Description
Structure probing data (DMS and 2A3) for a 177-nucleotide construct. The data come from the RNA Mapping Database (RMDB), libraries RFM100 and RFMREP. The RNA was probed in 150 mM KOAc, 10 mM MgCl2 and 150 mM bicine (pH 8.5) at 24 C. DMS adducts were read by reverse transcription with MarathonRT.
RNA sequence: GGGAACGACUCGAGUAGAGUCGAAAAACUGGAAAGUUGAACUGUAAAAAGUGAUAGUCUUGUACACGUAAGAAUAUUAAUCGUAGUAGUAUCCUGAGUACCACGGAGCACGUGAAAUUCUGUGGGAGUUGUCGUAAAUGUUCGCAUUUACGACAACAAAAGAAACAACAACAACAAC
Reactivity to DMS in 0.01 (KOAc 150mM, MgCl2 10mM, bicine 150mM(pH8.5), 24C), signal-to-noise 4, nucleotides 027 to 126: a090c020u000g010g020a050a060a030g000u010u000g000a180a080c020u010g000u000a090a070a100a100a030g020u020g000a110u000a070g000u010c010u010u000g020u020a080c140a070c150g000u000a080a070g020a060a030u010a060u000u020a080a070u000c060g020u000a090g010u000a040g010u010a110u000c020c000u000g020a090g000u030a180c010c010a020c000g000g000a000g020c190a040c100g000u010g000a080a100a100u010u010c010u010g020u000g000g000g000a140
Reactivity to 2A3 in 0.01 (KOAc 150mM, MgCl2 10mM, bicine 150mM(pH8.5), 24C), signal-to-noise 3, nucleotides 027 to 126: a010c030u020g010g050a200a010a000g040u080u060g040a040a010c000u000g020u080a070a020a000a030a000g050u060g030a040u020a080g060u040c010u050u060g040u110a010c030a020c050g020u090a010a060g070a230a030u200a060u250u160a080a070u110c050g010u040a070g040u000a000g030u000a100u060c000c010u040g020a050g040u020a040c010c000a020c000g000g000a000g000c080a020c170g070u110g070a060a020a020u010u000c000u000g040u000g010g020g000a050